[RMDB]
RNA sequence: GGGAACGACUCGAGUAGAGUCGAAAAUAAAAUCGUAGGGCGAGACGAUCGACGUAAAUGGCUCAAACUACUCGAGACCAAAGGAAUACGCUUCGGUAACUCGCUCUAAUCCCGAGCGAUAAAUGAAGUUAUUGAUAAGUUUCGACUUAUCAAUAACAAAAGAAACAACAACAACAAC
Reactivity to DMS in 0.01 (KOAc 150mM, MgCl2 10mM, bicine 150mM(pH8.5), 24C), signal-to-noise 4, nucleotides 027 to 126: u000a080a040a100a050u000c040g020u000a040g020g010g000c000g010a020g020a050c130g010a030u000c020g000a080c020g000u020a020a080a130u010g010g010c040u000c020a080a070a130c250u010a070c160u000c080g020a020g000a130c020c000a020a120a140g010g020a150a140u000a010c040g010c090u010u000c040g000g000u000a070a090c040u000c000g010c010u000c000u000a060a100u010c010c010c020g030a100g010c030g010a060u000a040a070a090u010g010a140a110
Reactivity to 2A3 in 0.01 (KOAc 150mM, MgCl2 10mM, bicine 150mM(pH8.5), 24C), signal-to-noise 5, nucleotides 027 to 126: u040a000a060a000a020u040c020g010u020a020g000g000g020c000g000a000g010a040c100g020a020u020c020g030a030c000g020u020a000a090a130u070g020g000c020u010c020a080a070a080c140u190a070c050u040c100g050a050g030a160c010c000a120a060a040g150g050a150a080u060a060c020g020c070u060u030c000g030g000u010a040a030c010u000c010g000c000u000c000u010a000a000u000c010c000c000g010a030g020c030g020a020u080a120a150a050u200g100a190a040